RNA sequence: GGGAACGACUCGAGUAGAGUCGAAAAAGGAGGCACCCAUGGGACUUACAAAAUCUCUCAAUGCCUUGGCAGUCGGUUUGGCGUUUUUGUUCGUAGCGAUGAUGCUUUUCAUCUGACGCGACGUGAACCCUCUUGGUAAGUUCGCUUACCAAGAGGGAAAAGAAACAACAACAACAAC
Reactivity to DMS in 0.01 (KOAc 150mM, MgCl2 10mM, bicine 150mM(pH8.5), 24C), signal-to-noise 1, nucleotides 027 to 126: a100g030g010a060g000g000c040a060c030c000c090a100u000g000g020g010a030c060u000u020a110c250a070a070a100a110u000c050u020c000u000c140a020a120u020g020c010c000u010u030g030g010c090a070g000u000c090g000g010u010u020u000g010g000c120g010u000u000u000u040u000g000u010u000c110g040u000a000g010c150g030a090u000g020a010u030g000c270u000u000u000u000c030a000u010c000u010g000a190c100g010c020g000a020c100g020u000g000a080a150